[RMDB]
RNA sequence: GGGAACGACUCGAGUAGAGUCGAAAAGACUGGGUGACAGCAAGACCCCUGCCUCAAAAAUAAAUAAAUAGGCUGGGCACAGUGGCUCACUCCUGUAAUCCCAGCACUUUGGGAGGCUGAGCUGACUGGAUCAUGAGGUCAGGAGAUGGAGACCAUAGCUCAAAAUAGGAUUCGUCCUAUUUUGAGCAAAAGAAACAACAACAACAAC
Reactivity to DMS in 0.01 (KOAc 150mM, MgCl2 10mM, bicine 150mM(pH8.5), 24C), signal-to-noise 1, nucleotides 027 to 156: g010a070c050u000g010g050g020u000g010a150c020a100g030c080a070a180g020a110c040c030c000c000u000g020c030c000u010c010a020a080a130a020a110u000a060a110a140u000a050a030a150u030a090g000g000c190u000g010g000g090c140a060c000a090g030u000g030g000c070u000c070a080c050u020c070c010u020g030u010a030a070u000c000c000c050a070g030c040a040c070u010u000u020g000g020g000a030g010g010c070u010g010a120g020c100u010g000a070c040u020g000g000a070u000c040a150u080g000a070g010g040u000c000a060g000g010a070g020a210u010g000g000a170g020a040c010c050a020u000a070
Reactivity to 2A3 in 0.01 (KOAc 150mM, MgCl2 10mM, bicine 150mM(pH8.5), 24C), signal-to-noise 1, nucleotides 027 to 156: g040a020c060u040g000g000g010u020g020a040c050a020g030c040a130a000g050a110c030c000c000c010u030g010c000c000u010c030a000a080a050a010a080u190a080a090a070u140a020a090a150u140a040g000g070c000u010g020g000g000c030a030c020a080g060u030g030g000c000u000c040a010c030u020c000c020u070g060u160a070a060u050c000c010c000a000g060c030a030c060u070u070u040g060g000g000a040g040g000c020u040g000a000g000c000u010g040a060c020u040g000g040a080u060c040a120u060g030a060g000g040u030c020a010g010g020a040g000a030u040g010g000a010g000a010c080c000a090u090a030
The data come from the RNA Mapping Database (RMDB), library OK3TST. An RNA of 207 nucleotides, treated with DMS and 2A3 and read out base by base. For 2A3, 792 sequencing reads were counted. The DMS profile rests on 1,607 reads.